[RMDB]
RNA sequence: GGGAACGACUCGAGUAGAGUCGAAAAGGGGUCUAGCAAGCUCCACGAAGAACAGUUAGACAUGUUCUGAAGCCUCCACGGAACAACAGCUAACUGGGAGUGGAGUGCUAGACGGAGGCACCCAAAACUACUGAAUAAGUUCGCUUAUUCAGUAGAACUCCCCUCUUGGAUUCGUCCAAGAGGGGAGAAAAGAAACAACAACAACAAC
Reactivity to 2A3 in 0.01 (KOAc 150mM, MgCl2 10mM, bicine 150mM(pH8.5), 24C), signal-to-noise 1, nucleotides 027 to 156: g040g000g020g000u000c000u000a010g000c040a140a080g110c000u010c010c020a050c020g160a300a030g010a010a010c000a000g000u000u000a000g010a050c060a280u210g000u010u000c010u010g000a120a000g000c000c000u030c000c020a010c020g000g000a020a020c030a030a020c030a110g110c010u010a000a000c010u010g000g000g020a000g000u000g000g010a000g000u000g010c020u000a010g000a010c000g020g000a000g010g000c040a040c010c010c010a040a100a030a020c020u020a010c010u000g010a000a000u000a000a000g020u000u090c160g020c160u000u000a000u010u000c000a000g000u000a000g000a000a010